[RMDB]
RNA sequence: GGGAACGACUCGAGUAGAGUCGAAAACAUACUGGCAAGCCACUGAGAGGCUGACACAAGUUAAAUAUUGGAUGCUUAACGCCUUAGCCUUUUCAGAGAAUCCAAAAUGCUACGGCAAUAAUUUAAGCACAUGUCAUGCAUUCGUGCAUGACAUGUGAAAAGAAACAACAACAACAAC
Reactivity to 2A3 in 0.01 (KOAc 150mM, MgCl2 10mM, bicine 150mM(pH8.5), 24C), signal-to-noise 3, nucleotides 027 to 126: c020a030u180a050c050u030g000g060c050a100a000g030c010c040a030c080u050g010a030g000a020g080g100c020u010g020a020c020a010c010a210a030g050u080u100a060a090a080u200a140u160u200g260g040a050u140g050c010u020u020a010a050c030g000c000c000u000u020a000g000c040c000u000u060u070u050c040a020g060a020g060a130a030u010c060c040a010a080a070a050u050g010c000u020a020c080g140g000c080a020a140u210a100a090u110u150u070a100a000g060
Reactivity to DMS in 0.01 (KOAc 150mM, MgCl2 10mM, bicine 150mM(pH8.5), 24C), signal-to-noise 3, nucleotides 027 to 126: c130a100u020a110c130u000g010g000c080a070a090g000c020c040a190c060u000g010a050g010a060g000g010c000u000g000a030c170a070c160a080a120g010u000u010a020a030a100u020a110u000u020g020g010a190u000g010c050u000u000a020a030c230g000c080c040u000u000a010g000c000c040u000u000u010u000c040a060g020a210g010a110a060u000c030c090a040a030a050a050u000g000c000u000a060c170g030g000c030a120a100u010a060a060u000u000u000a070a110g000
Source: RMDB library OK2TRN, as collected in RNAgym. An RNA of 177 nucleotides, treated with 2A3 and DMS and read out base by base. DMS adducts were read by reverse transcription with MarathonRT.